[RMDB]
An RNA of 177 nucleotides, treated with DMS and 2A3 and read out base by base. For DMS the reverse transcriptase was MarathonRT. The RNA was probed in 150 mM KOAc, 10 mM MgCl2 and 150 mM bicine (pH 8.5) at 24 C. The 2A3 profile rests on 12,729 reads.
RNA sequence: GGGAACGACUCGAGUAGAGUCGAAAACGCAACAGGAUGGCCGUGGGGCUGGUCGCGAUCGGGGGCGGGGCGGGAAUGGCGGCGCGCUGCGCGAUGUCCCGCGUGUGCUGGUCGAAGACAGGCAGGGUCUACCUAGACUAUUCGUAGUCUAGGUAGAAAAAGAAACAACAACAACAAC
Reactivity to DMS in 0.01 (KOAc 150mM, MgCl2 10mM, bicine 150mM(pH8.5), 24C), signal-to-noise 5, nucleotides 027 to 126: c100g000c140a090a100c100a070g000g020a110u010g010g010c040c030g000u010g010g000g000g010c140u010g000g020u010c030g010c030g010a080u020c050g010g000g000g000g020c070g020g000g020g000c070g010g000g000a110a040u010g000g020c050g010g000c040g000c080g000c050u020g020c050g000c010g000a080u020g010u000c020c020c000g020c060g000u010g010u030g000c030u010g000g000u000c040g000a080a090g010a070c060a060g000g020c030a070g010g000g010
Reactivity to 2A3 in 0.01 (KOAc 150mM, MgCl2 10mM, bicine 150mM(pH8.5), 24C), signal-to-noise 7, nucleotides 027 to 126: c050g010c030a040a100c020a110g110g020a190u070g070g000c050c020g040u140g000g010g020g020c070u070g030g020u040c040g000c020g060a100u100c040g010g010g010g050g060c100g010g030g020g070c090g010g000g080a060a070u150g130g020c030g020g020c020g000c010g010c030u110g000c010g000c010g030a050u110g070u090c000c000c000g000c010g000u100g020u030g000c020u040g020g010u030c030g020a080a010g020a010c020a020g030g020c010a020g040g000g000